RNA sequence: GGGAACGACUCGAGUAGAGUCGAAAAUGACCACCUUCCCUUGUGCUAUUCUGUCAGCCUACAGAUUCUGGUACCUGGAUUUUUACCCUUGGUGAUUUCUACCACCUUACUACUGAAGAAGACACCAAAUAUUGUGUCACUUCGGUGACACAAUAUUAAAAGAAACAACAACAACAAC
Reactivity to 2A3 in 0.01 (KOAc 150mM, MgCl2 10mM, bicine 150mM(pH8.5), 24C), signal-to-noise 6, nucleotides 027 to 126: u140g040a020c000c020a040c010c010u040u050c000c000c000u020u050g050u040g030c020u030a060u100u070c020u050g070u060c040a040g040c020c000u050a060c020a040g040a050u110u020c010u080g040g010u030a050c010c010u030g070g030a130u030u030u010u040u210a120c000c020c000u030u030g010g010u010g080a170u050u030u040c020u030a080c000c040a040c020c000u060u110a080c070u040a020c030u070g020a050a010g040a030a010g050a050c010a010c030c000a020
Reactivity to DMS in 0.01 (KOAc 150mM, MgCl2 10mM, bicine 150mM(pH8.5), 24C), signal-to-noise 4, nucleotides 027 to 126: u050g010a160c030c030a050c060c050u000u000c010c000c010u010u030g020u010g010c050u000a090u010u020c050u010g000u010c090a070g060c030c020u010a050c040a050g010a120u020u030c050u000g010g010u020a030c070c020u010g000g010a060u000u010u010u010u020a170c000c020c050u000u000g000g010u000g010a140u010u010u020c040u000a170c080c030a030c070c030u010u010a090c120u010a110c100u000g010a080a060g000a080a060g000a060c020a030c040c050a050